[RMDB]
Structure probing data (DMS and 2A3) for a 177-nucleotide construct. For 2A3 the reverse transcriptase was SuperScript II with manganese. Conditions: 150 mM KOAc, 10 mM MgCl2 and 150 mM bicine (pH 8.5), 24 C. DMS (dimethyl sulfate) methylates the pairing face of unpaired adenines and cytosines. Values cover nucleotides 27 to 126. The DMS profile rests on 2,402 reads. For DMS the reverse transcriptase was MarathonRT.

RNA sequence: GGGAACGACUCGAGUAGAGUCGAAAACGCCCUUUCGAGGGCGAGAUGUCCUCAAACAUUCUGGUAUUUCGCAAAUUGAAAAGCGAUACCAGUCUGGAUGAGGCUGAUAUGGUACGGUUCGCCGUACGUGAUUAACAGUCUUCGGACUGUUAAUCACAAAAGAAACAACAACAACAAC
Reactivity to DMS in 0.01 (KOAc 150mM, MgCl2 10mM, bicine 150mM(pH8.5), 24C), signal-to-noise 3, nucleotides 027 to 126: c020g010c000c000c000u000u000u000c190g000a010g020g000g030c000g000a060g010a090u000g000u000c000c000u010c000a020a010a300c010a020u000u000c010u000g000g000u010a030u000u000u030c000g010c000a020a090a160u000u000g000a030a110a150a080g010c010g010a040u000a010c000c000a010g030u010c000u000g000g010a300u000g000a000g000g000c010u000g000a120u010a050u010g010g000u000a010c010g000g000u000u010c300g040c010c020g030u000a010c010
Reactivity to 2A3 in 0.01 (KOAc 150mM, MgCl2 10mM, bicine 150mM(pH8.5), 24C), signal-to-noise 3, nucleotides 027 to 126: c020g000c000c000c000u030u030u050c210g100a020g000g010g000c060g010a000g000a010u080g100u130c000c010u000c020a000a000a010c000a000u020u000c010u020g000g010u030a050u060u190u060c020g000c020a050a160a300u140u200g090a160a120a100a000g020c000g000a010u010a000c000c000a000g010u010c000u000g000g020a010u020g010a000g010g000c010u020g020a050u060a100u260g140g010u000a000c010g000g070u000u030c260g020c080c010g010u020a010c050